[RMDB]
RNA sequence: GGGAACGACUCGAGUAGAGUCGAAAAGAUAUGGAAUGACGAGGGAGCCUAUCGGAAACGAUAAGGCAUCGAUCUCGUUCAUUCCUAAGUCAAAAGGAUUAAAUCCACUUCGGUGGAUUUAAUCCAAGUUAACAGUUAAGUUCGCUUAACUGUUAACAAAAGAAACAACAACAACAAC
Reactivity to DMS in 0.01 (KOAc 150mM, MgCl2 10mM, bicine 150mM(pH8.5), 24C), signal-to-noise 5, nucleotides 027 to 126: g000a050u000a300u000g000g010a040a010u000g000a010c000g000a040g000g010g000a040g020c000c000u000a030u010c010g010g010a100a070a140c000g010a010u000a050a070g030g010c000a130u010c140g010a080u030c000u000c000g000u010u000c000a000u000u010c000c000u000a010a070g000u000c030a070a070a110a120g000g000a020u000u000a000a000a010u000c000c000a010c000u000u010c240g030g010u000g000g000a000u000u000u000a000a000u000c000c000a010a040
Reactivity to 2A3 in 0.01 (KOAc 150mM, MgCl2 10mM, bicine 150mM(pH8.5), 24C), signal-to-noise 4, nucleotides 027 to 126: g000a020u050a020u120g000g000a000a000u010g000a000c010g010a010g020g140g000a010g000c000c000u020a000u010c000g010g020a050a030a020c000g000a010u050a120a300g000g010c020a050u100c020g030a040u020c010u000c000g010u040u030c000a010u000u000c000c000u010a030a000g030u010c020a000a000a090a190g000g000a000u000u020a000a000a000u000c000c000a010c020u050u150c300g110g000u000g000g000a000u000u000u000a000a000u000c000c000a000a000
Chemical mapping of a 177-nucleotide RNA with DMS and 2A3. Source: RMDB library TTRDEL, as collected in RNAgym. 2A3 adducts were read by reverse transcription with SuperScript II with manganese. Conditions: 150 mM KOAc, 10 mM MgCl2 and 150 mM bicine (pH 8.5), 24 C. DMS (dimethyl sulfate) methylates the pairing face of unpaired adenines and cytosines.